Structure probing data (DMS and 2A3) for a 177-nucleotide construct.

[RMDB]
RNA sequence: GGGAACGACUCGAGUAGAGUCGAAAAUUCUCCACCCGUGGGCUGAGCCACAGCAGGGUUGAUGUUGGCAGGGAGCACUCCCAGAGGGGAAUCGGAGUCCUGUGUGUGUGCUGGGAGGACGGAGAGCGAUACGUCUAGCUUUCGAGCUAGACGUAUCAAAAGAAACAACAACAACAAC
Reactivity to DMS in 0.01 (KOAc 150mM, MgCl2 10mM, bicine 150mM(pH8.5), 24C), signal-to-noise 3, nucleotides 027 to 126: u010u000c000u010c000c070a210c060c030c030g000u000g010g010g010c050u010g000a120g010c040c050a040c030a120g010c050a070g000g000g020u020u000g000a080u000g010u000u010g000g030c050a120g000g020g010a100g010c130a140c060u000c010c010c030a080g000a110g000g020g010g000a090a080u000c110g010g010a130g000u000c030c010u000g010u000g010u010g000u000g020u020g040c010u010g010g000g000a090g010g010a080c080g010g010a090g000a090g010c180
Reactivity to 2A3 in 0.01 (KOAc 150mM, MgCl2 10mM, bicine 150mM(pH8.5), 24C), signal-to-noise 1, nucleotides 027 to 126: u050u020c010u000c020c000a030c000c020c030g050u080g000g090g000c070u070g090a000g030c050c000a030c020a040g050c020a040g060g040g050u030u050g060a130u090g040u210u130g010g040c030a030g030g010g040a100g020c030a040c060u010c000c010c010a020g070a030g040g020g000g020a030a050u080c080g010g050a030g050u000c030c000u070g010u010g030u040g020u020g040u070g000c030u040g010g010g000a020g020g000a010c000g000g010a010g010a000g060c080
Values are in units of 0.01, from 0 to 300, in steps of 10. Values cover nucleotides 27 to 126.